[RMDB]
RNA sequence: GGGAACGACUCGAGUAGAGUCGAAAAGAUAUGGAUCUGAGAACGAUAAGGAGCCAUCGGAAACGAUGGGCUCCUUUUGACGUUCUGUCCUAAGUCAAAGCAGAACUUAGUUCGCUAAGUUCUGCAAGUGUUGGUAACCGUUCGCGGUUACCAACACAAAAGAAACAACAACAACAAC
Reactivity to DMS in 0.01 (KOAc 150mM, MgCl2 10mM, bicine 150mM(pH8.5), 24C), signal-to-noise 2, nucleotides 027 to 126: g000a040u000a300u010g020g000a020u010c080u020g000a050g000a010a020c010g010a120u010a030a010g010g010a000g060c000c000a010u000c010g000g000a100a140a120c000g000a010u000g040g040g010c010u000c000c010u000u000u000u000g010a160c030g000u000u000c000u010g010u000c010c000u000a040a140g010u000c090a080a090a170g010c000a000g000a020a010c000u000u000a000g000u010u010c250g010c010u000a000a010g000u010u000c000u000g010c010a030a010